[RMDB]
RNA sequence: GGGAACGACUCGAGUAGAGUCGAAAAUCCUUCCUUUUCGAAGGAAGGACAGUGCACAGUCUUCGCAUCUGUGAAUCACACUACAGCCGUGUCUAUGCGAGGUUUUAAUCAAGUUCGCUUGAUUAAAUAGUUAUUGGAAAUUCGUUUCCAAUAACUAAAAAGAAACAACAACAACAAC
Reactivity to 2A3 in 0.01 (KOAc 150mM, MgCl2 10mM, bicine 150mM(pH8.5), 24C), signal-to-noise 8, nucleotides 027 to 126: u000c000c000u010u010c000c000u060u050u020u090c240g120a010a010g000g000a000a000g000g000a010c030a010g020u030g010c010a010c000a020g010u000c050u070u020c110g000c010a020u010c010u010g000u010g040a060a060u120c050a020c000a010c060u160a080c060a060g060c020c020g150u110g050u040c080u100a030u020g010c010g010a010g040g010u030u060u010u030a000a000u010c000a000a000g010u030u050c150g090c080u000u000g000a000u000u020a010a010a020
Reactivity to DMS in 0.01 (KOAc 150mM, MgCl2 10mM, bicine 150mM(pH8.5), 24C), signal-to-noise 9, nucleotides 027 to 126: u000c000c000u000u000c000c000u000u000u000u010c170g010a020a010g010g000a020a000g010g000a010c110a020g010u000g010c010a020c010a020g010u000c070u000u000c010g010c010a040u000c010u000g000u000g000a090a040u010c240a270c030a030c030u000a100c140a140g000c020c030g010u010g000u010c160u010a030u000g010c020g000a030g010g000u010u000u000u000a010a010u000c000a010a010g010u000u010c200g010c000u000u000g000a010u000u000a000a010a060
Chemical mapping of a 177-nucleotide RNA with 2A3 and DMS. It was measured as part of the RMDB library M2PK50. The 2A3 profile rests on 26,653 reads. 2A3 adducts were read by reverse transcription with SuperScript II with manganese. Values cover nucleotides 27 to 126.